[RMDB]
RNA sequence: GGGAACGACUCGAGUAGAGUCGAAAAGCACAAGACUUCGAACAUUAUAGCAGUUAGUAGUUGCCUAAACCCAUUGCAAUAUAUGGGACAGUAGAGGUCGCAAGCCUAUAGUGUGCGGUGAACAUUCAAAAGGGAUGGUACUUCGGUACCAUCCCAAGCAAUGAUAAUCCUUCGGGAUUAUCAUUGCAAAAGAAACAACAACAACAAC
Reactivity to DMS in 0.01 (KOAc 150mM, MgCl2 10mM, bicine 150mM(pH8.5), 24C), signal-to-noise 2, nucleotides 027 to 156: g030c050a110c030a050a110g020a140c030u000u000c040g030a120a080c030a090u000u000a060u000a040g000c050a080g010u010u000a150g030u000a120g080u000u000g020c000c030u000a060a100a190c000c000c000a020u000u000g000c040a140a130u000a080u000a010u000g000g000g000a040c070a080g010u000a140g000a060g000g010u010c020g000c100a010a140g040c090c000u000a060u050a050g000u000g010u000g020c040g000g000u000g030a070a050c100a120u000u030c110a020a040a160a150g020g030g020a010u010g020g010u000a000c000u010u000c300g020g020u000a010c010c030a000u000c010c000c010a000a030
Reactivity to 2A3 in 0.01 (KOAc 150mM, MgCl2 10mM, bicine 150mM(pH8.5), 24C), signal-to-noise 3, nucleotides 027 to 156: g040c020a030c020a120a050g070a050c010u040u050c070g070a060a010c010a060u030u040a040u050a040g030c080a030g070u080u090a030g020u070a020g000u090u170g010c030c020u070a070a060a060c000c000c000a000u000u010g000c000a010a010u010a000u000a000u190g010g000g010a020c010a010g080u110a040g030a020g060g000u040c020g000c020a000a040g020c000c000u040a030u010a020g030u030g000u010g050c020g020g020u050g030a140a040c030a110u150u300c130a150a070a060a070g000g000g020a000u010g010g000u010a000c010u020u080c170g030g000u000a000c000c000a000u010c010c000c000a000a000